[RMDB]
RNA sequence: GGGAACGACUCGAGUAGAGUCGAAAAGAAAGAUGGAAGGGGCAUGCAGAGGAGCACGAGGCUUGGCUAAAAGCCGACCUGUGCUAUGCUACCCCUCGCUGGCUCUCCUGUGCCUGCCUCUUCCAAAUUAUAUGAGCGUAUUCGUACGCUCAUAUAAAAAAGAAACAACAACAACAAC
Reactivity to DMS in 0.01 (KOAc 150mM, MgCl2 10mM, bicine 150mM(pH8.5), 24C), signal-to-noise 9, nucleotides 027 to 126: g010a100a110a100g010a170u010g010g010a010a010g000g010g010g010c000a010u000g010c000a020g000a010g000g000a030g010c070a090c040g000a020g000g020c100u010u030g030g020c010u000a070a080a140a120g020c000c010g010a070c180c140u030g010u040g020c010u010a060u030g000c020u000a100c300c300c010c010u000c040g000c180u010g010g010c070u040c030u000c010c000u000g000u000g000c020c050u000g000c000c000u000c000u000u000c000c000a010a010a020
Reactivity to 2A3 in 0.01 (KOAc 150mM, MgCl2 10mM, bicine 150mM(pH8.5), 24C), signal-to-noise 7, nucleotides 027 to 126: g100a010a030a010g130a040u120g000g000a000a000g010g000g000g000c000a000u010g000c000a010g010a020g190g010a010g010c000a000c030g020a000g020g020c090u140u200g020g000c010u090a130a090a040a010g010c010c000g030a090c020c060u090g060u120g010c000u030a020u140g000c000u030a040c000c000c000c010u000c010g020c120u040g050g000c010u020c000u030c040c000u110g010u000g140c000c010u000g000c000c000u000c000u010u000c000c000a000a000a000
Structure probing data (DMS and 2A3) for a 177-nucleotide construct. Source: RMDB libraries RFM100 and RFMREP, as collected in RNAgym. For DMS the reverse transcriptase was MarathonRT. Conditions: 150 mM KOAc, 10 mM MgCl2 and 150 mM bicine (pH 8.5), 24 C.